[RMDB]
RNA sequence: GGGAACGACUCGAGUAGAGUCGAAAAGAGGCCAUGUCGUAAUUAGCAGGGUACAGCGUUGCCGGCGAUAAUUAAUGACGUUGGUCACGUUGGUUUCAUGUCGAUUUCAUUUCAUGACACGGCCGAAUAAUAAUAUUUCAUUCGUGAAAUAUUAUUAAAAAGAAACAACAACAACAAC
Reactivity to DMS in 0.01 (KOAc 150mM, MgCl2 10mM, bicine 150mM(pH8.5), 24C), signal-to-noise 9, nucleotides 027 to 126: g000a280g010g020c000c010a080u000g000u000c000g020u000a030a020u010u000a150g010c010a030g000g000g000u010a040c000a040g000c020g000u010u000g010c000c000g000g000c000g000a070u020a070a130u020u050a110a130u030g010a120c000g010u000u000g010g010u000c240a020c010g020u000u000g010g010u000u000u000c010a040u000g000u010c060g010a030u000u010u020c160a150u030u030u020c180a070u030g000a010c020a020c100g010g010c000c010g010a080a060
Reactivity to 2A3 in 0.01 (KOAc 150mM, MgCl2 10mM, bicine 150mM(pH8.5), 24C), signal-to-noise 9, nucleotides 027 to 126: g150a040g000g000c010c000a000u020g000u000c020g030u030a030a030u030u050a070g010c010a010g090g000g040u080a050c000a000g000c000g020u020u010g010c000c000g000g040c010g020a050u090a220a120u280u180a090a110u210g080a020c010g000u000u010g010g000u020c010a000c010g010u000u020g090g070u030u090u140c070a080u060g100u100c040g060a050u010u060u050c050a080u040u120u190c080a070u180g000a000c000a000c010g000g000c000c000g000a000a000

Structure probing data (DMS and 2A3) for a 177-nucleotide construct. The RNA was probed in 150 mM KOAc, 10 mM MgCl2 and 150 mM bicine (pH 8.5) at 24 C. Source: RMDB libraries RFM100 and RFMREP, as collected in RNAgym. Values cover nucleotides 27 to 126. DMS adducts were read by reverse transcription with MarathonRT. 2A3 adducts were read by reverse transcription with SuperScript II with manganese.